[RMDB]
About this RNA
Chemical mapping of a 177-nucleotide RNA with DMS and 2A3. The reactions ran in a buffer of 150 mM KOAc, 10 mM MgCl2 and 150 mM bicine (pH 8.5), at 24 C. As a SHAPE reagent, 2A3 marks flexible, mostly unpaired nucleotides at the ribose 2'-OH. 2A3 adducts were read by reverse transcription with SuperScript II with manganese. High DMS reactivity at an A or C suggests that its Watson-Crick edge is free.

RNA sequence: GGGAACGACUCGAGUAGAGUCGAAAAGAUAUGGACAGCAGGGAGAUGAUCGAUGAACUACGUCAAGAUGAGUGUCGGAAACGACAUUGAGACGCAUCGAUCAUCAUCGAUCUGCUGUCCUAAGUCACUCUCUCGCUUAGUUCGCUAAGCGAGAGAGAAAAGAAACAACAACAACAAC
Reactivity to DMS in 0.01 (KOAc 150mM, MgCl2 10mM, bicine 150mM(pH8.5), 24C), signal-to-noise 2, nucleotides 027 to 126: g010a170u000a300u010g000g000a000c010a030g000c010a040g000g020g010a210g020a050u000g020a010u010c010g000a000u000g000a070a130c190u040a300c060g020u000c010a040a160g000a290u000g000a100g030u000g000u000c000g030g020a140a090a180c010g050a000c000a010u020u010g000a300g000a020c000g040c080a000u000c000g000a000u010c000a070u020c020a090u010c180g000a300u020c000u000g000c010u000g020u050c000c000u000a020a040g010u010c040a290
Reactivity to 2A3 in 0.01 (KOAc 150mM, MgCl2 10mM, bicine 150mM(pH8.5), 24C), signal-to-noise 2, nucleotides 027 to 126: g030a000u050a040u170g000g010a020c000a000g000c000a010g010g010g000a060g010a010u060g000a000u000c030g000a000u040g010a100a210c160u200a080c300g020u040c010a050a000g110a300u300g200a060g280u070g030u040c010g050g030a070a050a050c040g020a010c020a020u010u090g040a050g000a010c000g000c000a000u000c010g020a000u000c000a000u010c010a010u040c000g000a030u030c010u000g020c000u000g000u000c000c000u030a000a000g000u000c000a020